The record gives the reactivity of an RNA of 207 nucleotides to DMS and 2A3. Values are in units of 0.01, from 0 to 300, in steps of 10. For DMS the reverse transcriptase was MarathonRT.
[RMDB]
RNA sequence: GGGAACGACUCGAGUAGAGUCGAAAAAGUGCGGGGUUCGCCCCGCACUGAAACUCCUAAGUCCAGCGCACAUUGUCAGCGGAGUAUCGGAAACGAUAUGUCGCUUGGAUUUAUAGCGCUGGAUAUGGAUCGACGCGCUCAAGUUCGCUUGAGCGAACCUUUCAGCAUAAUUCGUUAUGCUGAAAGGAAAAGAAACAACAACAACAAC
Reactivity to DMS in 0.01 (KOAc 150mM, MgCl2 10mM, bicine 150mM(pH8.5), 24C), signal-to-noise 2, nucleotides 027 to 156: a010g050u000g040c000g030g020g050g030u000u000c270g020c010c010c000c020g000c020a000c000u000g000a070a090a110c150u000c010c020u000a080a200g010u010c000c000a040g000c020g020c010a170c200a140u000u000g000u000c050a040g050c010g010g000a050g030u000a020u000c000g000g000a170a110a280c010g020a040u000a010u000g010u010c010g020c000u010u000g020g000a090u000u000u000a090u000a170g030c000g010c000u000g000g010a000u000a020u000g000g000a080u000c020g020a100c140g000c000g000c000u000c010a030a010g020u000u000c300g010c010u000u000g000a040g030c010g000a030a050
Reactivity to 2A3 in 0.01 (KOAc 150mM, MgCl2 10mM, bicine 150mM(pH8.5), 24C), signal-to-noise 3, nucleotides 027 to 156: a000g000u000g000c010g000g010g010g000u020u070c130g120c000c010c010c010g010c000a010c000u010g000a010a000a000c040u020c000c010u030a120a040g030u000c000c000a010g000c010g020c010a050c030a260u080u130g100u200c010a020g000c000g010g020a050g010u010a010u010c010g040g030a100a040a040c000g000a000u010a010u030g160u110c000g010c000u080u170g040g000a010u030u180u020a200u180a050g000c000g000c000u000g000g000a000u000a010u030g000g010a030u130c130g060a050c090g050c010g000c070u000c000a000a000g010u150u100c170g070c140u000u000g000a000g060c010g000a020a030